[RMDB]
RNA sequence: GGGAACGACUCGAGUAGAGUCGAAAACCCUUUUCCUAUCUCUACAAUAUUUUUCCAGUAUGUUCCCAUUGUUCUAUUUCCACUGUUCCUAUUUUAAUUAAGGCACGUGCUACUUUUGGGUCAUUCAUUCAUUUAUACCUCAAACAAUUAUAGAGUAGAUUAGUGCUGAGUUCGCUCAGCACUAAUCAAAAGAAACAACAACAACAAC
Reactivity to 2A3 in 0.01 (KOAc 150mM, MgCl2 10mM, bicine 150mM(pH8.5), 24C), signal-to-noise 1, nucleotides 027 to 156: c000c000c000u000u060u020u020c050c030u180a210u060c040u000c000u050a090c050a150a090u030a230u150u170u020u080u050c040c000a050g030u040a080u250g030u060u120c000c000c050a090u080u080g000u050u080c030u050a140u110u070u020c080c000a030c110u030g040u080u060c000c010u100a210u040u190u000u220a140a180u130u100a020a020g030g000c000a000c080g030u000g000c000u000a040c000u090u000u040u100g030g000g010u000c000a000u030u060c010a010u060u000c030a030u120u080u100a150u100a060c010c040u050c030a110a130a130c040a140a080u080u170a130u090a110g130a000g000u100a010